[RMDB]
Conditions: 150 mM KOAc, 10 mM MgCl2 and 150 mM bicine (pH 8.5), 24 C. An RNA of 207 nucleotides, treated with 2A3 and read out base by base. 2A3 adducts were read by reverse transcription with SuperScript II with manganese. Reactivities are given for positions 27 through 156.
RNA sequence: GGGAACGACUCGAGUAGAGUCGAAAAAGCGAUGAUACGUCAUCGCAACGAUUGCCUGAUCGUAAAACAGGAGACGGCCGUGGCCGCGACCACGUAAAAAAGCGUAACGUGGUCUGCGGACCACGAAAAAAGCGCGGAACGUUCGCGUUCCGCGCAAGAUACGUGUACGCUUCGGCGUACACGUAUCAAAAGAAACAACAACAACAAC
Reactivity to 2A3 in 0.01 (KOAc 150mM, MgCl2 10mM, bicine 150mM(pH8.5), 24C), signal-to-noise 1, nucleotides 027 to 156: a000g060c010g000a000u020g000a000u070a080c300g050u030c000a000u010c000g000c010a000a000c010g000a010u030u030g000c010c010u010g000a010u000c030g140u210a010a010a010a010c010a010g030g010a030g120a030c240g180g020c070c030g010u000g000g020c000c010g000c010g000a000c000c000a010c010g010u050a040a070a160a160a040a000g190c080g060u030a060a000c000g000u000g000g060u010c140u140g010c000g000g020a070c000c000a000c000g000a020a000a000a000a000a000g000c010g010c000g010g010a000a000c010g030u080u110c250g030c010g120u020u030c020c010g000c010g000c000a000a000
Source: RMDB library M2RFPK, as collected in RNAgym.